[RMDB]
RNA sequence: GGGAACGACUCGAGUAGAGUCGAAAAGAGCUACUUUUGUGUAGAUCAUAGACCUGUGUGUAGUUUUCCACUUUGCGCUAAUGGUCUUGUAUUCGGCUUAUACAAGAAUAUGUGCACAGGUAGUCCUCUUACAUUGAGUCUUCGGACUCAAUGUAAGAAAAGAAACAACAACAACAAC
Reactivity to 2A3 in 0.01 (KOAc 150mM, MgCl2 10mM, bicine 150mM(pH8.5), 24C), signal-to-noise 2, nucleotides 027 to 126: g000a020g020c020u000a000c020u080u160u300u180g140u040g000u040a020g040a080u040c000a040u090a040g030a020c000c000u000g010u010g010u000g000u050a090g070u050u030u160u000c040c020a040c050u090u080u150g060c040g000c020u060a100a080u080g030g010u000c000u000u000g010u010a020u010u060c040g140g000c160u110u070a050u020a030c030a040a030g020a060a020u070a040u140g020u020g000c010a000c000a010g010g000u000a010g030u050c000c000u010
Reactivity to DMS in 0.01 (KOAc 150mM, MgCl2 10mM, bicine 150mM(pH8.5), 24C), signal-to-noise 1, nucleotides 027 to 126: g000a050g010c000u000a000c010u000u000u010u010g000u000g030u000a020g010a050u010c040a110u000a150g000a020c010c010u000g020u010g010u010g000u000a090g000u000u000u000u000c040c050a090c090u000u010u000g020c110g000c070u000a070a100u020g000g000u000c000u000u010g020u000a000u010u010c200g000g030c190u000u010a040u010a020c020a020a040g000a020a040u010a080u010g000u000g010c020a050c010a010g000g020u000a060g000u000c020c020u000
Conditions: 150 mM KOAc, 10 mM MgCl2 and 150 mM bicine (pH 8.5), 24 C.
An RNA of 177 nucleotides, treated with 2A3 and DMS and read out base by base.
For DMS the reverse transcriptase was MarathonRT.
For 2A3, 2,203 sequencing reads were counted.